[RMDB]
An RNA of 177 nucleotides, treated with 2A3 and read out base by base. It was measured as part of the RMDB library OK1LIB. Reactivities are given for positions 27 through 126. For 2A3 the reverse transcriptase was SuperScript II with manganese. Conditions: 150 mM KOAc, 10 mM MgCl2 and 150 mM bicine (pH 8.5), 24 C.

RNA sequence: GGGAACGACUCGAGUAGAGUCGAAAAGCUCUAGCCUAUUAAAUUAUUUAGGGUCAGCUGCUUAUCAGCUGUUGCUUACAAACAGAAAUGUCAACUCGUCAACAACCUGUUGAAAACUAGAGUUGCCCCGAGGUAGGCGUUUCGACGCCUACCUCGGAAAAGAAACAACAACAACAAC
Reactivity to 2A3 in 0.01 (KOAc 150mM, MgCl2 10mM, bicine 150mM(pH8.5), 24C), signal-to-noise 1, nucleotides 027 to 126: g000c000u000c000u000a000g000c000c010u060a060u300u190a140a060a200u140u110a140u020u260u000a050g010g000g000u030c000a000g000c010u050g090c250u220u070a040u250c040a000g000c000u000g020u110u100g000c000u040u060a070c120a060a030a000c000a060g070a000a150a000u020g020u110c060a050a000c000u050c220g080u040c040a000a000c000a000a180c000c020u000g000u000u000g040a040a040a040a040c000u000a000g000a000g040u060u100g090c000c000